[RMDB]
RNA sequence: GGGAACGACUCGAGUAGAGUCGAAAAAGGAGCGUCUCAGUCGCAUGGCCGUCAGCGGUGAUGACUGCGUGGUGAAACCUUUGGACGACCGCUUCGCCACAUCACUACACUUCCUAAAUGCUAUGUCGAUGCACCCACAGUUCGCUGUGGGUGCAUCAAAAGAAACAACAACAACAAC
Reactivity to 2A3 in 0.01 (KOAc 150mM, MgCl2 10mM, bicine 150mM(pH8.5), 24C), signal-to-noise 2, nucleotides 027 to 126: a010g220g010a070g000c040g020u020c000u000c030a070g120u060c000g010c020a010u050g050g000c060c000g090u090c050a010g050c020g060g010u030g020a120u110g020a040c030u030g000c020g010u080g020g030u060g050a100a040a070c000c000u060u130u120g070g060a060c070g040a070c000c010g050c000u060u050c010g000c000c000a000c000a020u050c030a030c100u190a060c060a020c010u040u000c000c000u000a060a130a070u080g010c010u120a110u030g180u130c030

The record gives the reactivity of an RNA of 177 nucleotides to 2A3. The RNA was probed in 150 mM KOAc, 10 mM MgCl2 and 150 mM bicine (pH 8.5) at 24 C. Values cover nucleotides 27 to 126. The 2A3 profile rests on 777 reads. Reactivities are rounded to 0.1 and cut off at 0 and 3.